About this RNA:
This 177-nucleotide RNA was probed chemically with 2A3. Conditions: 150 mM KOAc, 10 mM MgCl2 and 150 mM bicine (pH 8.5), 24 C. For 2A3 the reverse transcriptase was SuperScript II with manganese. Source: RMDB library OK1LIB, as collected in RNAgym.
RNA sequence: GGGAACGACUCGAGUAGAGUCGAAAAAACAUUAUUUUUGGCGAACCAUUUCGCAACAUACUUACUUAAUUUUUCUGGAAAAUUUCUUAAAAUUCGCGGCCCACGGUCAUAAAGAUAUAUUUCCAAGGACGAUUAAACUCUUCGGAGUUUAAUCGUCAAAAGAAACAACAACAACAAC
Reactivity to 2A3 in 0.01 (KOAc 150mM, MgCl2 10mM, bicine 150mM(pH8.5), 24C), signal-to-noise 2, nucleotides 027 to 126: a020a010c210a250u300u120a190u050u100u070u120u180g120g000c010g030a040a040c160c010a160u080u140u020c010g050c020a060a000c010a060u220a040c010u230u060a030c040u140u070a160a170u210u210u020u000u030c030u040g020g020a000a080a050a080u080u090u010c010u010u080a160a130a230a180u070u140c020g030c040g040g010c060c010c000a010c030g010g040u000c000a010u040a110a080a000g040a000u010a000u040a010u090u010u000c000c000a040a010g210